[RMDB]
RNA sequence: GGGAACGACUCGAGUAGAGUCGAAAAUAUCACUCUUUUCUUCCUUUUUCAUUCUCUCAAUUGUUCUUUUUAUUUGAGGAAAUUUGAUUGUAUUGCAUAUACAACUAUGCGAUGCACUUUGUUCAUUACAGUCAUUAUUGUUCGCAAUAAUGACUGUAAAAGAAACAACAACAACAAC
Reactivity to 2A3 in 0.01 (KOAc 150mM, MgCl2 10mM, bicine 150mM(pH8.5), 24C), signal-to-noise 3, nucleotides 027 to 126: u110a040u020c030a020c060u020c040u050u040u060u050c020u050u070c030c000u080u080u050u070u110c020a050u040u010c080u010c010u000c020a020a130u020u080g040u180u100c070u150u280u120u080u190a180u130u090u090g030a010g000g110a040a020a040u150u110u170g060a100u060u040g010u010a000u010u000g000c020a000u020a000u000a150c060a070a040c070u010a010u010g000c000g000a000u000g060c010a010c030u100u090u060g050u020u010c020a030u010u010
Reactivity to DMS in 0.01 (KOAc 150mM, MgCl2 10mM, bicine 150mM(pH8.5), 24C), signal-to-noise 1, nucleotides 027 to 126: u010a070u000c070a090c050u000c030u020u000u010u010c000u000u000c030c020u030u000u000u000u000c100a120u000u000c000u000c010u010c030a030a060u000u010g010u000u000c010u000u000u000u000u030a100u020u030u000g010a130g000g010a070a050a070u010u010u010g000a100u020u000g030u000a030u010u010g010c000a000u000a010u000a090c300a070a050c120u000a000u000g010c010g000a000u010g000c030a010c300u010u000u000g010u000u000c050a100u000u000
The record gives the reactivity of an RNA of 177 nucleotides to 2A3 and DMS. 2A3 adducts were read by reverse transcription with SuperScript II with manganese. The reactions ran in a buffer of 150 mM KOAc, 10 mM MgCl2 and 150 mM bicine (pH 8.5), at 24 C.